[RMDB]
RNA sequence: GGGAACGACUCGAGUAGAGUCGAAAACUAUGCAGAUUCGUCUGCAUAGAGACCCGAUGAUGCGGCACUUACACAGCUUCAUACACGUAAGAAGUGCAAUAAAGGGACGAGGGUUCGCCCUCGUCAAAUAAAGGGUAUCAUUCGUGAUACCCUUUAUAAAAGAAACAACAACAACAAC
Reactivity to 2A3 in 0.01 (KOAc 150mM, MgCl2 10mM, bicine 150mM(pH8.5), 24C), signal-to-noise 4, nucleotides 027 to 126: c000u010a010u000g010c000a000g020a050u020u090c100g130u010c100u000g000c000a000u010a000g000a010g020a010c000c000c010g010a120u140g000a020u090g020c100g080g000c070a000c030u040u090a040c090a000c020a080g020c030u070u030c010a030u110a180c050a010c110g040u050a030a060g050a110a000g080u030g010c030a020a100u190a170a100a030g200g030g000a010c010g000a000g000g010g000u030u080c140g100c020c000c000u000c000g000u000c000a010a000
Reactivity to DMS in 0.01 (KOAc 150mM, MgCl2 10mM, bicine 150mM(pH8.5), 24C), signal-to-noise 9, nucleotides 027 to 126: c000u000a000u000g010c000a000g000a030u000u010c190g010u000c000u000g000c000a000u000a000g000a110g000a170c010c000c000g010a090u010g010a060u010g010c100g000g010c020a060c030u000u000a090c090a070c110a120g000c060u000u000c150a080u000a130c140a080c130g000u000a100a070g010a060a030g010u000g010c040a110a080u010a050a090a110g010g010g010a000c000g000a020g000g010g020u000u010c240g010c000c010c000u000c000g010u000c000a010a060
Conditions: 150 mM KOAc, 10 mM MgCl2 and 150 mM bicine (pH 8.5), 24 C. Chemical mapping of a 177-nucleotide RNA with 2A3 and DMS. DMS adducts were read by reverse transcription with MarathonRT. It was measured as part of the RMDB library M2PK50.